[RMDB]
RNA sequence: GGGAACGACUCGAGUAGAGUCGAAAAAUGAUGGGGGAGGCUGUGCAUGAGUUGGGGAAGGGAUAUAGAGGAAAUGUCUAUACCUUUCACACAGUUUUGCUAUGAAUGUACAAUUGCUCUAAAAGUACUACCAGGAUGGUUUCGACCAUCCUGGUAGAAAAGAAACAACAACAACAAC
Reactivity to DMS in 0.01 (KOAc 150mM, MgCl2 10mM, bicine 150mM(pH8.5), 24C), signal-to-noise 2, nucleotides 027 to 126: a020u020g020a080u000g010g010g000g010g000a050g000g000c050u000g000u010g010c020a050u010g000a080g000u020u000g010g010g020g000a000a070g000g010g000a190u000a000u000a010g010a020g020g010a080a110a120u020g000u000c000u000a010u010a010c010c000u020u000u000c000a060c100a070c140a060g000u000u020u010u000g010c080u000a130u010g000a050a090u030g010u000a050c130a040a090u000u010g000c030u000c020u060a030a080a110a120g010u050a160
Chemical mapping of a 177-nucleotide RNA with DMS. The reactions ran in a buffer of 150 mM KOAc, 10 mM MgCl2 and 150 mM bicine (pH 8.5), at 24 C. DMS adducts were read by reverse transcription with MarathonRT. For DMS, 3,040 sequencing reads were counted.